[RMDB]
RNA sequence: GGGAACGACUCGAGUAGAGUCGAAAAAAAUUUAAUCUGUGCUACAGAUAAUAUAGAAUGUGCUAAGGCUUAUAGUGAAGCUUUUUCUAAAUCAAAAAUAGAGUGCAAGCUACUUAUUAUUGUAGAUGGUAUUACGACGAUUCGUCGUCGUAAUACCAAAAGAAACAACAACAACAAC
Reactivity to 2A3 in 0.01 (KOAc 150mM, MgCl2 10mM, bicine 150mM(pH8.5), 24C), signal-to-noise 3, nucleotides 027 to 126: a000a000a050u180u140u080a110a090u040c080u080g120u130g010c000u020a050c010a030g210a040u000a020a000u120a020u040a010g090a090a000u060g050u010g040c010u020a020a140g020g010c000u030u060a090u230a260g220u300g260a020a000g010c000u030u000u030u110u000c010u030a090a120a140u140c110a040a000a000a010a000u120a010g080a000g010u090g000c000a060a060g080c000u000a010c090u030u050a020u010u000a010u060u010g000u000a000g050a130u050